Description
An RNA of 177 nucleotides, treated with DMS and 2A3 and read out base by base. The RNA was probed in 150 mM KOAc, 10 mM MgCl2 and 150 mM bicine (pH 8.5) at 24 C. The data come from the RNA Mapping Database (RMDB), library OK1LIB. Reactivities are given for positions 27 through 126. DMS adducts were read by reverse transcription with MarathonRT.
RNA sequence: GGGAACGACUCGAGUAGAGUCGAAAAGAAAGAUUACCAAGUUGGUGGUUUAGUGCAUCAUUCAGAGCACGACUCGAGAAGUGUGAAACUCCUGAUCAAAAGUGUGUACAAACCCAAACUGAUGGAGCAGAGAUAGGGACUUCGGUCCCUAUCUCUGAAAAGAAACAACAACAACAAC
Reactivity to DMS in 0.01 (KOAc 150mM, MgCl2 10mM, bicine 150mM(pH8.5), 24C), signal-to-noise 2, nucleotides 027 to 126: g020a120a060a080g050a160u010u010a100c030c010a090a020g000u000u000g020g060u040g020g000u000u000u000a080g000u000g000c030a000u020c010a090u000u010c040a050g000a060g020c030a020c040g030a030c000u000c080g050a240g020a080a030g000u000g000u000g000a050a070a050c080u030c120c030u000g000a050u010c220a120a020a040a080g000u020g010u000g010u010a010c020a030a000a030c010c000c010a150a020a010c000u000g030a140u010g000g000a190g020
Reactivity to 2A3 in 0.01 (KOAc 150mM, MgCl2 10mM, bicine 150mM(pH8.5), 24C), signal-to-noise 2, nucleotides 027 to 126: g300a060a020a000g080a130u200u220a020c000c000a000a000g030u010u020g120g120u090g030g050u040u070u090a060g000u000g000c000a100u060c010a010u130u020c000a040g000a000g000c010a000c040g120a050c000u000c000g130a110g020a190a140g050u050g000u000g000a000a060a030c060u180c070c080u000g000a030u050c130a210a120a120a000g070u060g010u030g020u170a010c000a000a000a000c030c000c000a000a140a030c000u020g070a230u170g030g010a040g040